[RMDB]
RNA sequence: GGGAACGACUCGAGUAGAGUCGAAAAGAAAUCCGUCAGGUGACACGAGGCGUUUGCAAGGGGAAACGAUGAGCGCCUCCCCGCAGCGGCAAGAUGAAACGCAAAAGCCUUCAGCAACCGCAGGCGGCAUGGCGGCUAGGUUCGCCUAGCCGCCAUGAAAAGAAACAACAACAACAAC
Reactivity to 2A3 in 0.01 (KOAc 150mM, MgCl2 10mM, bicine 150mM(pH8.5), 24C), signal-to-noise 2, nucleotides 027 to 126: g080a000a010a000u000c010c020g050u020c000a070g030g060u050g090a040c010a000c180g000a000g000g050c040g000u020u090u000g030c090a140a160g000g000g000g110a000a100a050c050g070a170u210g030a000g020c010g000c000c030u040c000c000c040c030g000c000a030g020c000g020g030c070a010a060g050a060u110g130a000a090a090c090g000c040a100a150a010a010g020c000c000u100u160c050a020g000c070a020a060c000c030g050c050a080g000g020c030g010g000
Reactivity to DMS in 0.01 (KOAc 150mM, MgCl2 10mM, bicine 150mM(pH8.5), 24C), signal-to-noise 1, nucleotides 027 to 126: g000a000a010a000u020c020c000g010u010c070a200g010g020u010g040a300c300a180c160g000a080g000g010c000g060u030u000u000g040c090a100a170g020g000g030g000a090a210a100c060g000a100u000g010a120g130c020g000c030c030u000c000c000c020c070g040c000a080g000c000g000g000c210a030a180g000a010u020g110a000a070a100c280g000c000a030a000a060a000g000c080c000u000u000c090a070g060c060a210a220c030c000g040c070a150g000g000c020g000g000

Background:
Chemical mapping of a 177-nucleotide RNA with 2A3 and DMS. Reactivities are given for positions 27 through 126. Source: RMDB library OK1LIB, as collected in RNAgym. The DMS profile rests on 977 reads. For DMS the reverse transcriptase was MarathonRT.